[RMDB]
RNA sequence: GGGAACGACUCGAGUAGAGUCGAAAAGGGGUCGUACUGCUCGGAGGCAGCGACAUGCUCUGAAGCCUCCACGGAGCAACAGCGCUGCUACCCACCCGAGCUUUACGACGGAGGCACCCAAAAGCUCAUAAGUAAUGUUCGCAUUACUUAUGAGCAACUGAGGACCAUGAUUCGUCAUGGUCCUCAGAAAAGAAACAACAACAACAAC
Reactivity to 2A3 in 0.01 (KOAc 150mM, MgCl2 10mM, bicine 150mM(pH8.5), 24C), signal-to-noise 2, nucleotides 027 to 156: g040g010g000g020u000c000g000u000a000c000u010g000c000u010c000g020g000a020g020g000c000a000g000c000g030a080c090a130u300g000c000u000c010u010g060a140a040g000c000c000u000c000c010a010c010g010g010a000g020c070a070a040c080a180g080c010g000c010u010g000c010u050a090c090c110c020a040c000c010c000g000a000g000c000u000u010u000a000c000g010a000c030g010g000a000g010g000c000a050c000c000c000a040a110a020a020g000c010u010c010a000u000a020a000g000u000a010a010u000g010u060u110c300g010c120a000u010u000a000c000u000u000a000u000g000a010g010c020a000a000
Reactivity to DMS in 0.01 (KOAc 150mM, MgCl2 10mM, bicine 150mM(pH8.5), 24C), signal-to-noise 1, nucleotides 027 to 156: g000g020g000g020u000c010g020u000a040c010u000g070c020u010c020g000g020a300g000g000c020a040g040c010g000a010c070a300u000g010c000u100c000u000g030a050a110g030c000c000u180c000c000a230c020g060g000a060g060c000a080a030c080a060g010c000g080c020u000g020c000u000a060c030c010c010a300c150c000c000g000a030g020c010u000u000u000a060c000g000a020c070g060g060a070g000g070c010a060c010c000c010a010a080a110a110g010c050u010c000a010u010a020a020g000u000a000a020u000g020u000u010c300g020c010a030u000u000a000c000u000u000a010u000g000a000g020c000a010a030
About this RNA:
Structure probing data (2A3 and DMS) for a 207-nucleotide construct. 2A3 adducts were read by reverse transcription with SuperScript II with manganese. The DMS profile rests on 1,334 reads.